[RMDB]
RNA sequence: GGGAACGACUCGAGUAGAGUCGAAAAUCUAACUUUCUUCACGUGGUCUCUCCGUUUAGCUAGCUUGGGCUUCCUCACAGCAUGGCUGCCUCAGGAUGGUCUGACUGUUUACAUGGUAGCUGGUUUCCAAAAGAGUAUAAAAGUGGAAACUACAAAACCGAAGUAGAGCAUUCGUGCUCUACUUCGGAAAAGAAACAACAACAACAAC
Reactivity to 2A3 in 0.01 (KOAc 150mM, MgCl2 10mM, bicine 150mM(pH8.5), 24C), signal-to-noise 1, nucleotides 027 to 156: u100c000u000a000a060c020u090u120u030c010u120u100c130a000c110g090u060g020g020u000c070u000c020u000c070c030g030u040u090u020a010g010c020u000a000g000c000u050u010g070g030g000c000u030u030c020c030u030c030a040c060a030g130c030a100u090g030g030c000u010g000c000c010u110c010a010g000g070a030u060g010g110u040c010u030g070a090c000u010g040u130u060u030a000c000a070u100g010g010u000a010g000c040u060g020g000u010u000u020c000c000a000a000a140a000g140a020g070u270a160u130a170a150a040a000g020u040g000g030a000a000a000c000u020a040c010a010a070a000a000